[RMDB]
RNA sequence: GGGAACGACUCGAGUAGAGUCGAAAAACAGGUUACGACCUGACUUUGGUAAUGACCGCAAGCGGUCAUUACAGUGAAAUUAGCCGUUGGCGAGUGAAAUCUGACUUUGUCAGGUGAAAUUGCCCAAGGUUAUCCGCGUGUUCGCACGCGGAUAACCAAAAGAAACAACAACAACAAC
Reactivity to 2A3 in 0.01 (KOAc 150mM, MgCl2 10mM, bicine 150mM(pH8.5), 24C), signal-to-noise 1, nucleotides 027 to 126: a010c000a010g230g000u100u060a100c150g050a000c000c030u000g000a010c010u140u080u220g140g000u000a000a000u000g000a000c040c040g010c040a100a000g080c080g000g030u060c000a000u000u000a000c000a100g000u050g140a000a000a230u000u000a010g100c080c090g030u000u290g000g000c090g000a040g000u000g080a260a000a000u090c060u040g010a060c000u050u170u060g000u000c000a030g000g080u040g000a110a000a070u000u050g010c000c000c080a180a000